RNA sequence: GGGAACGACUCGAGUAGAGUCGAAAAUUGUUCUAUUAAUGAUUGCAUUGAUGAGGGAAGUCUUAUUUGGCAUCUUAUGAACUGGAGCUUCAGCUGGUCUGUGGUUUUAAUUGUUUUUAUUGCAAUUUUGCAAUAUGGCAGACCGCAGUUCAGCUGGGCUAUAGGGGAACUUCGGUUCCCCUAUAGCAAAAGAAACAACAACAACAAC
Reactivity to 2A3 in 0.01 (KOAc 150mM, MgCl2 10mM, bicine 150mM(pH8.5), 24C), signal-to-noise 2, nucleotides 027 to 156: u110u050g020u020u000c060u060a120u140u090a140a100u200g080a070u060u180g020c050a030u120u050g020a010u060g040a130g020g030g040a080a070g070u030c030u100u140a130u100u040u110g040g000c030a030u000c010u000u090a100u130g000a040a010c040u060g030g070a080g040c000u080u080c010a000g000c000u000g000g010u000c000u010g000u010g010g070u030u030u030u170a110a100u090u050g030u050u040u080u060u010a000u000u000g000c010a010a270u120u220u300u190g000c000a000a000u010a020u010g000g000c010a010g010a010c010c000g000c010a000g000u040u040c000a000g000c000u000g000g020